[RMDB]
Chemical mapping of a 177-nucleotide RNA with 2A3 and DMS. DMS adducts were read by reverse transcription with MarathonRT. The RNA was probed in 150 mM KOAc, 10 mM MgCl2 and 150 mM bicine (pH 8.5) at 24 C. For 2A3, 588 sequencing reads were counted.
RNA sequence: GGGAACGACUCGAGUAGAGUCGAAAAGAAGAGGAGCUCAUGUUCAAAAGAAUGUGUCGUGAAUGCAGUCAAGCAGACAGGCAGCUUCGUCAGAAAUUCCUUAGUAAAUAUUACACUGUAUGCGGGGCCGCCCCUCUAUAUUCGUAUAGAGGGGCGGAAAAGAAACAACAACAACAAC
Reactivity to 2A3 in 0.01 (KOAc 150mM, MgCl2 10mM, bicine 150mM(pH8.5), 24C), signal-to-noise 1, nucleotides 027 to 126: g070a000a020g120a030g000g000a000g000c000u000c070a100u100g000u010u000c070a000a000a110a160g080a050a080u090g000u000g000u000c120g060u040g080a050a000u090g040c040a050g110u170c060a050a000g000c010a000g000a070c000a000g010g000c010a020g000c050u040u040c060g140u020c000a000g060a010a030a000u000u000c000c000u000u000a010g040u130a060a010a030u230a080u250u060a040c120a010c030u060g020u140a020u160g000c050g010g000g020g020
Reactivity to DMS in 0.01 (KOAc 150mM, MgCl2 10mM, bicine 150mM(pH8.5), 24C), signal-to-noise 1, nucleotides 027 to 126: g000a210a070g000a160g030g000a120g010c000u010c110a200u000g000u000u000c000a170a050a060a030g000a000a000u000g000u000g000u000c100g070u070g000a000a020u000g000c040a080g000u080c150a070a060g000c240a080g000a030c070a000g000g000c050a030g000c000u020u010c000g000u010c050a110g000a020a100a130u000u000c000c000u000u010a040g020u020a000a030a090u010a030u030u000a040c090a050c080u000g010u000a110u000g000c030g000g000g020g060